[RMDB]
RNA sequence: GGGAACGACUCGAGUAGAGUCGAAAAGAUUUGUGUCUCCACGAGAUUAGGACUCCUUUUUUUUGUACGAGCGUACUGCUCUUUGGAGUCCACGCGAAUCAACUUCGCUUGACGAAGAUCAAAAAGAGGGUAUCCAAACGUUCGCGUUUGGAUACCCAAAAGAAACAACAACAACAAC
Reactivity to 2A3 in 0.01 (KOAc 150mM, MgCl2 10mM, bicine 150mM(pH8.5), 24C), signal-to-noise 1, nucleotides 027 to 126: g000a000u000u080u050g000u020g170u160c000u000c020c000a090c010g100a100g110a040u000u300a040g000g000a000c000u020c040c020u000u000u000u000u000u000u030u120g090u060a030c110g000a000g000c020g100u010a070c260u300g000c000u000c000u010u260u030g000g000a000g000u000c000c000a000c000g000c000g000a000a000u030c000a000a070c000u000u060c000g000c010u180u240g010a010c060g000a020a000g000a000u300c270a120a190a030a000a060g300a070
This 177-nucleotide RNA was probed chemically with 2A3. The reactions ran in a buffer of 150 mM KOAc, 10 mM MgCl2 and 150 mM bicine (pH 8.5), at 24 C. For 2A3 the reverse transcriptase was SuperScript II with manganese.